The data come from the RNA Mapping Database (RMDB), library PDB130.
This 207-nucleotide RNA was probed chemically with 2A3.
2A3 adducts were read by reverse transcription with SuperScript II with manganese.
The RNA was probed in 150 mM KOAc, 10 mM MgCl2 and 150 mM bicine (pH 8.5) at 24 C.

RNA sequence: GGGAACGACUCGAGUAGAGUCGAAAAUCGCCAUUUAACUCUGAGGCUGAGUGUAUUUCAUUCAGCCCGAGAUUCGACGGGACCCCGGAUGACUUUAGGAUAAAUUAUCUUAAAGCCGAGAUCAUGUCGAAGUAUGACGACUUCAGCCUAGGUAUUGGCAUCUGUGACUCUUCGGAGUCACAGAUGCAAAAGAAACAACAACAACAAC
Reactivity to 2A3 in 0.01 (KOAc 150mM, MgCl2 10mM, bicine 150mM(pH8.5), 24C), signal-to-noise 1, nucleotides 027 to 156: u020c010g020c010c000a010u020u010u010a040a010c000u000c020u100g080a070g040g000c000u010g000a010g010u000g010u030a160u080u210u170c000a000u010u000c000a000g000c000c000c000g000a000g000a000u020u010c000g010a000c000g000g000g020a000c000c020c010c000g010g010a060u060g080a020c000u000u000u000a000g000g000a000u020a010a300a060u270u110a050u000c000u000u000a000a000a000g000c000c000g020a010g000a020u000c010a020u010g000u000c010g010a000a000g020u030a000u020g010a000c020g000a010c020u040u020c040a010g020c000c010u030a050g000g070u120a150u050u110g030